[RMDB]
RNA sequence: GGGAACGACUCGAGUAGAGUCGAAAAUGGAUCUAACGGGUGAGUCACCAGAGUCCAGGAAGACCCCUGUUGCGGUUGUCCAGUACAAGCAGUCUCCGUACCUGCAAGCCAAGCUCAAAGGUCAGGGUCCUCAUACAUCGUUCGCGAUGUAUGAGGAAAAAGAAACAACAACAACAAC
Reactivity to DMS in 0.01 (KOAc 150mM, MgCl2 10mM, bicine 150mM(pH8.5), 24C), signal-to-noise 2, nucleotides 027 to 126: u010g000g030a050u000c040u030a090a130c110g000g020g000u000g010a160g020u010c050a140c040c020a130g020a110g000u000c030c020a070g010g040a110a070g030a140c070c000c030c040u020g010u000u000g000c300g000g010u000u000g000u000c050c030a140g010u010a050c140a070a070g000c050a060g010u000c040u000c060c050g020u000a060c060c030u010g000c130a080a130g020c100c090a030a070g000c040u010c060a030a150a050g000g000u010c020a090g020g010g010